RNA sequence: GGGAACGACUCGAGUAGAGUCGAAAAGCACAAGACUUCGAACAUUAUAGCAGUUAGUAGUUGCCUAAACCCAUUGCAAUAUAUGGGACAGUAUAGGUCGCAAGCCUAUACUGUGCGGUGAACAUUCAAAAGGGAUGGUACUUCGGUACCAUCCCAACUGCAUAAGAUCGUUCGCGAUCUUAUGCAGAAAAGAAACAACAACAACAAC
Reactivity to 2A3 in 0.01 (KOAc 150mM, MgCl2 10mM, bicine 150mM(pH8.5), 24C), signal-to-noise 2, nucleotides 027 to 156: g030c030a020c020a170a030g070a090c070u190u120c140g050a080a060c070a100u170u170a100u180a130g010c060a030g000u050u120a020g040u020a010g020u080u040g020c010c040u110a190a140a110c010c000c000a000u000u000g000c040a000a000u020a000u000a000u180g020g000g000a000c000a000g000u000a000u000a000g000g010u120c040g000c190a040a030g000c000c010u000a000u030a000c000u000g000u010g000c090g000g000u030g060a070a040c050a080u180u300c130a180a090a040a070g000g010g000a000u010g020g000u000a020c010u020u080c190g030g000u000a000c010c000a000u010c000c010c000a010a000
Reactivity to DMS in 0.01 (KOAc 150mM, MgCl2 10mM, bicine 150mM(pH8.5), 24C), signal-to-noise 2, nucleotides 027 to 156: g000c020a060c020a040a100g010a090c020u010u030c040g010a190a110c120a110u010u000a130u000a030g060c050a040g000u010u010a080g020u000a160g030u000u000g000c020c040u010a060a070a270c000c010c000a060u000u000g010c040a120a190u010a060u020a000u000g020g010g030a040c000a020g010u000a000u000a000g030g020u000c040g000c300a100a300g000c000c000u000a010u000a020c000u000g000u030g030c110g000g050u000g010a020a070c060a150u000u000c080a040a170a120a130g000g050g010a000u010g000g000u000a020c020u010u010c300g060g000u010a040c000c000a000u000c000c000c010a000a010